[RMDB]
RNA sequence: GGGAACGACUCGAGUAGAGUCGAAAACGAAUCGUCCCCGCAUGGCAGAGACCGAGCCCCCUUCGGAAAAGGACCGGAGGAGGGAGCUAGGAGCGUGGGGGGGCCGGUGGAGCCAUGGGAUGCUCCUAGAGCACCCCGUUCGCGGGGUGCAAAAGAAACAACAACAACAAC
Reactivity to 2A3 in 0.01 (KOAc 150mM, MgCl2 10mM, bicine 150mM(pH8.5), 24C), signal-to-noise 4, nucleotides 027 to 129: c030g020a020a040u160c050g030u080c020c000c000c000g100c020a030u020g010g000c050a000g060a000g040a200c000c000g010a030g000c010c000c010c010c000u020u100c030g070g050a020a090a060a090g100g050a040c010c040g010g010a020g000g020a050g000g010g010a030g020c020u050a030g000g060a020g020c050g030u180g030g020g010g000g010g020g000c000c010g010g030u060g010g020a020g000c000c050a060u010g010g030g000a000u040g030c010u040c010c060u070a030g010a070
Reactivity to DMS in 0.01 (KOAc 150mM, MgCl2 10mM, bicine 150mM(pH8.5), 24C), signal-to-noise 3, nucleotides 027 to 129: c080g070a110a050u060c120g000u050c000c000c000c000g050c040a070u010g030g040c050a060g040a300g040a070c070c010g010a150g020c030c000c000c020c030u070u030c000g060g070a090a070a130a070g050g020a000c090c040g000g000a040g000g010a050g030g020g000a020g040c030u030a050g000g000a070g020c090g030u080g000g000g010g070g020g050g000c050c030g130g000u110g000g030a300g000c000c080a050u050g000g010g040a000u030g010c000u020c010c100u000a090g050a140

Structure probing data (2A3 and DMS) for a 170-nucleotide construct. The reactions ran in a buffer of 150 mM KOAc, 10 mM MgCl2 and 150 mM bicine (pH 8.5), at 24 C. Values cover nucleotides 27 to 129. The 2A3 profile rests on 7,206 reads. High 2A3 reactivity points to a flexible backbone, as in loops and unpaired stretches. It was measured as part of the RMDB library 15KLIB.